[RMDB]
RNA sequence: GGGAACGACUCGAGUAGAGUCGAAAAGUUGAAUACACACUAUGAGUCAUACUGUAGCAAUACUUAUAAUACUGUUCGUCGUCGUUAAUGCUACUUGGUGGGGAUCAAGAAUUAUCGACUCAAUAUUUGACAAAAUUGAAAACCGAGGAGGAAAAAGCAAGAUGAGACAUUUCGAUGUCUCAUCUUGAAAAGAAACAACAACAACAAC
Reactivity to DMS in 0.01 (KOAc 150mM, MgCl2 10mM, bicine 150mM(pH8.5), 24C), signal-to-noise 1, nucleotides 027 to 156: g020u030u010g000a130a060u000a110c040a060c060a060c070u010a040u010g010a090g040u000c050a130u000a060c070u000g020u000a120g040c030a130a090u000a100c050u000u000a090u010a100a070u010a050c080u010g000u000u000c090g070u000c030g030u000c040g000u000u000a090a070u000g020c040u000a010c000u000u000g070g040u010g000g010g000g000a100u000c010a040a060g000a210a110u000u000a120u000c020g010a060c010u010c010a080a070u000a120u000u000u000g020a120c070a060a060a080a200u000u020g000a100a050a110a080c100c070g010a060g050g010a160g020g020a030a040a040a180a130g000
Reactivity to 2A3 in 0.01 (KOAc 150mM, MgCl2 10mM, bicine 150mM(pH8.5), 24C), signal-to-noise 3, nucleotides 027 to 156: g020u010u030g030a050a020u110a050c040a010c020a010c090u060a060u140g030a010g050u040c040a030u040a150c080u070g030u060a010g000c020a010a110u030a070c040u090u100a050u060a270a120u090a150c030u050g060u110u080c030g030u020c020g000u010c010g010u070u070a070a010u120g040c010u010a040c020u010u020g050g010u050g010g030g000g000a000u040c040a020a040g050a080a010u060u040a040u060c040g020a010c010u010c020a040a030u080a070u070u040u040g010a010c010a010a100a080a090u060u090g050a050a050a030a040c050c050g000a020g000g070a050g000g000a070a060a020a000a000g030
Overview
The data come from the RNA Mapping Database (RMDB), library OK3TST. The record gives the reactivity of an RNA of 207 nucleotides to DMS and 2A3. Values cover nucleotides 27 to 156. The reactions ran in a buffer of 150 mM KOAc, 10 mM MgCl2 and 150 mM bicine (pH 8.5), at 24 C. For 2A3 the reverse transcriptase was SuperScript II with manganese.